[RMDB]
RNA sequence: GGGAACGACUCGAGUAGAGUCGAAAAAAGCGAUUGAUUGGGAACAGCACAUAGUUCUGGUGGAUCUGUCGGUCAAUCUCUUGCGCCAGAGCUUCUGGUGUCUCAAAUGGCUGGGUAAUGACAUCAACGACUUUUAAUAGUUCGCUAUUAAAAGUCGAAAAGAAACAACAACAACAAC
Reactivity to DMS in 0.01 (KOAc 150mM, MgCl2 10mM, bicine 150mM(pH8.5), 24C), signal-to-noise 8, nucleotides 027 to 126: a060a030g000c090g010a050u000u000g010a070u000u000g010g030g010a090a060c030a040g010c220a080c090a070u000a070g010u010u010c080u010g010g020u000g000g000a090u000c020u000g000u010c090g010g000u000c050a040a050u000c020u010c020u000u000g010c050g020c000c010a010g000a080g010c160u000u000c070u000g000g010u000g010u000c020u000c040a050a070a100u000g000g000c030u000g010g000g010u010a060a070u000g010a070c080a060u000c110a070a210
Reactivity to 2A3 in 0.01 (KOAc 150mM, MgCl2 10mM, bicine 150mM(pH8.5), 24C), signal-to-noise 5, nucleotides 027 to 126: a000a000g050c050g030a040u040u070g020a040u030u070g090g000g040a110a060c010a010g070c040a020c010a100u180a060g110u110u080c080u130g120g020u020g050g050a110u040c020u030g100u100c090g020g000u020c010a010a100u020c040u010c010u070u070g010c000g010c000c000a020g000a030g080c030u120u030c010u050g030g020u010g030u000c010u010c000a070a110a030u100g060g000c030u020g010g000g070u090a120a110u110g060a040c010a060u120c030a060a050
Background: Chemical mapping of a 177-nucleotide RNA with DMS and 2A3. For 2A3 the reverse transcriptase was SuperScript II with manganese. Reactivities are rounded to 0.1 and cut off at 0 and 3. For DMS the reverse transcriptase was MarathonRT. It was measured as part of the RMDB library OK2TST.